Chemical mapping of a 177-nucleotide RNA with DMS and 2A3. The reactions ran in a buffer of 150 mM KOAc, 10 mM MgCl2 and 150 mM bicine (pH 8.5), at 24 C. Reactivities are given for positions 27 through 126.
[RMDB]
RNA sequence: GGGAACGACUCGAGUAGAGUCGAAAAAAUUGUAAAAAAGGUUAACUAUCCACAUUUGAUACGACUAGUACUUUUUGCCCAUCCAUUUUUGACUCGUGAAUUUUUUAACAUGUGAAUUUUGACAAUCAUUUUAACUUGAAUUCGUUCAAGUUAAAAUAAAAGAAACAACAACAACAAC
Reactivity to DMS in 0.01 (KOAc 150mM, MgCl2 10mM, bicine 150mM(pH8.5), 24C), signal-to-noise 4, nucleotides 027 to 126: a050a060u020u020g000u020a010a030a070a070a030a070g010g010u020u010a060a060c080u000a060u010c020c050a050c080a100u010u020u020g000a100u010a050c100g020a050c120u000a040g010u000a030c020u000u000u010u000u010g010c040c030c020a090u020c090c050a070u000u000u010u010u010g000a050c030u000c040g000u010g000a030a010u000u010u010u030u030u020a050a090c080a060u020g000u010g010a040a080u000u020u010u010g010a070c090a100a090u030c100
Reactivity to 2A3 in 0.01 (KOAc 150mM, MgCl2 10mM, bicine 150mM(pH8.5), 24C), signal-to-noise 5, nucleotides 027 to 126: a000a000u190u130g030u050a040a060a010a010a020a030g050g000u070u040a040a050c030u040a060u050c030c020a070c050a160u080u100u170g070a070u090a040c040g020a030c080u000a030g080u060a060c010u050u060u020u060u130g030c020c010c000a040u020c020c000a050u030u040u020u070u100g010a020c010u010c050g020u020g070a120a130u020u010u020u050u120u180a080a050c030a050u130g030u050g080a090a100u110u080u040u060g060a030c030a030a050u050c000
Source: RMDB libraries RFM100 and RFMREP, as collected in RNAgym.